[RMDB]
RNA sequence: GGGAACGACUCGAGUAGAGUCGAAAAAGAAGAGGCCCUACUGAUACUCCCUCGUCGUCCGUCCGGCUGUUUGCGUGGAAGUCUUUGAAGAAAAGGGGGGAAAUGAUCGAGUGACAGAAUGGGUACACACGAUGGAAUGAUUCGUCAUUCCAUCGUGAAAAGAAACAACAACAACAAC
Reactivity to DMS in 0.01 (KOAc 150mM, MgCl2 10mM, bicine 150mM(pH8.5), 24C), signal-to-noise 2, nucleotides 027 to 126: a130g000a150a050g010a300g010g010c020c010c000u010a290c020u000g010a100u010a020c030u010c020c020c020u020c000g010u010c090g000u000c030c000g000u010c010c000g020g020c040u010g000u010u010u000g010c080g010u000g020g020a070a100g010u020c000u000u000u000g020a110a120g010a060a020a020a080g000g000g000g020g000g000a170a070a050u000g000a040u020c050g000a020g030u000g010a080c060a020g000a140a050u010g010g000g020u010a040c080a180
Reactivity to 2A3 in 0.01 (KOAc 150mM, MgCl2 10mM, bicine 150mM(pH8.5), 24C), signal-to-noise 1, nucleotides 027 to 126: a010g100a080a010g040a150g080g000c030c000c040u010a010c000u000g020a050u090a190c030u020c020c020c000u000c000g000u020c010g070u000c060c000g230u000c000c000g070g010c020u060g200u200u080u200g080c100g020u060g020g020a010a010g030u000c020u040u080u110g090a080a050g100a090a080a040a050g020g030g000g060g000g000a010a060a050u190g010a010u130c050g020a000g030u030g020a000c000a010g120a190a010u050g040g000g000u070a030c020a020
Structure probing data (DMS and 2A3) for a 177-nucleotide construct. Values cover nucleotides 27 to 126. For 2A3 the reverse transcriptase was SuperScript II with manganese. Source: RMDB library OK2TRN, as collected in RNAgym. For DMS, 1,644 sequencing reads were counted.